[RMDB]
Conditions: 150 mM KOAc, 10 mM MgCl2 and 150 mM bicine (pH 8.5), 24 C. Chemical mapping of a 177-nucleotide RNA with DMS and 2A3. The data come from the RNA Mapping Database (RMDB), library RFMREP.
RNA sequence: GGGAACGACUCGAGUAGAGUCGAAAAUCGCCUCCUAAAAGGUAACGGAGGCGCGCGAAGGUCCGCUCGGGACGGUCGGCAACCGUCCUUUUGAGUGCAAGAGCGUAAGCGGGCUUGACUGCGAGGCCCCUUAGCUAUACUUCGGUAUAGCUAAGGGAAAAGAAACAACAACAACAAC
Reactivity to DMS in 0.01 (KOAc 150mM, MgCl2 10mM, bicine 150mM(pH8.5), 24C), signal-to-noise 2, nucleotides 027 to 126: u010c010g030c000c040u000c000c010u010a090a070a160a190g010g010u000a100a100c230g010g030a030g020g030c000g000c060g020c000g010a140a020g000g000u000c040c000g020c010u000c110g000g010g000a000c000g000g020u020c040g000g000c120a160a180c000c000g000u000c010c010u010u000u000u030g020a130g010u000g000c040a060a100g000a180g000c020g010u020a030a040g000c000g000g000g010c020u000u000g000a060c090u000g000c040g010a070g000g000c070
Reactivity to 2A3 in 0.01 (KOAc 150mM, MgCl2 10mM, bicine 150mM(pH8.5), 24C), signal-to-noise 2, nucleotides 027 to 126: u080c010g000c020c000u020c010c010u150a190a190a070a090g160g030u020a140a000c020g010g000a000g000g000c000g000c000g020c010g030a060a020g050g000u010c010c010g020c020u040c040g020g020g000a010c000g000g030u070c070g170g000c050a030a020c000c000g010u010c000c040u050u000u130u080g000a020g000u120g050c030a190a090g020a050g190c040g040u110a060a020g000c020g000g000g000c000u030u050g070a090c060u060g030c020g040a070g050g130c010